[RMDB]
RNA sequence: GGGAACGACUCGAGUAGAGUCGAAAACUGGCAAAGAGAGGAGGAAUUUCGGAAGGAAUUCUCCCAAGAAGGUCCAAGAGAACUUUCAAGAAGGAGGAUUUUUCCCCAAGACGCUGGUGGACUCUUGUAAACCUCCGGUUCGCCGGAGGUAAAAGAAACAACAACAACAAC
Reactivity to 2A3 in 0.01 (KOAc 150mM, MgCl2 10mM, bicine 150mM(pH8.5), 24C), signal-to-noise 3, nucleotides 027 to 129: c020u020g070g010c060a040a080a030g080a020g000a020g040g010a010g010g060a040a050u050u080u060c010g060g010a040a040g000g000a000a000u080u020c020u010c030c010c000a000a010g020a010a000g000g000u080c020c020a080a010g040a000g000a030a020c020u010u020u020c030a040a020g030a020a020g050g000a000g030g000a010u080u060u000u010u060c000c000c030c000a020a030g010a020c010g000c070u030g010g010u040g000g000a030c000u030c000u130u070g060u100a100a140
Reactivity to DMS in 0.01 (KOAc 150mM, MgCl2 10mM, bicine 150mM(pH8.5), 24C), signal-to-noise 4, nucleotides 027 to 129: c030u020g000g000c050a080a080a080g050a080g020a070g020g000a040g010g000a010a070u050u010u020c000g020g060a100a050g040g040a050a100u030u010c060u030c040c030c060a050a040g040a040a020g030g020u110c000c000a060a210g030a000g010a000a000c020u020u010u010c130a050a030g000a150a070g000g020a060g030g030a000u000u000u000u000u000c010c000c050c120a030a050g010a020c190g020c080u060g070g000u040g000g040a100c100u000c040u060u050g020u050a050a040